[RMDB]
RNA sequence: GGGAACGACUCGAGUAGAGUCGAAAAAGGAUGAACAGCACAAGGUGCUGGCAGCUCUGAGGCGUAACCCCACUUUGCUGAAGCACUUCAGACCAAUCCUGGAGGACACCCUGGAAGAGAAGCUCGAGGCUAAAACAAAUUUCGAUUUGUUUUAGCCAAAAGAAACAACAACAACAAC
Reactivity to DMS in 0.01 (KOAc 150mM, MgCl2 10mM, bicine 150mM(pH8.5), 24C), signal-to-noise 4, nucleotides 027 to 126: a050g010g010a080u010g010a130a100c040a050g000c040a050c100a140a080g020g000u010g040c000u000g010g030c040a090g010c080u000c020u010g010a050g010g010c060g000u000a120a130c130c060c020c040a070c080u000u000u000g020c040u000g010a110a060g000c060a040c040u000u000c080a060g020a090c070c060a070a060u000c020c020u000g000g010a080g000g000a100c110a070c020c030c010u000g010g010a090a100g000a110g020a090a110g000c010u000c060g010a300
Reactivity to 2A3 in 0.01 (KOAc 150mM, MgCl2 10mM, bicine 150mM(pH8.5), 24C), signal-to-noise 2, nucleotides 027 to 126: a000g090g000a040u090g020a150a050c020a050g020c060a000c070a190a210g220g060u040g010c000u030g080g030c010a020g000c020u020c020u120g020a040g000g020c030g050u100a130a150c000c000c050c000a040c040u160u140u090g010c030u050g020a060a030g000c000a030c000u070u040c010a060g040a120c040c010a020a040u030c010c000u030g020g000a030g020g020a030c020a040c050c000c010u030g090g010a070a070g030a030g010a080a040g050c000u030c060g030a050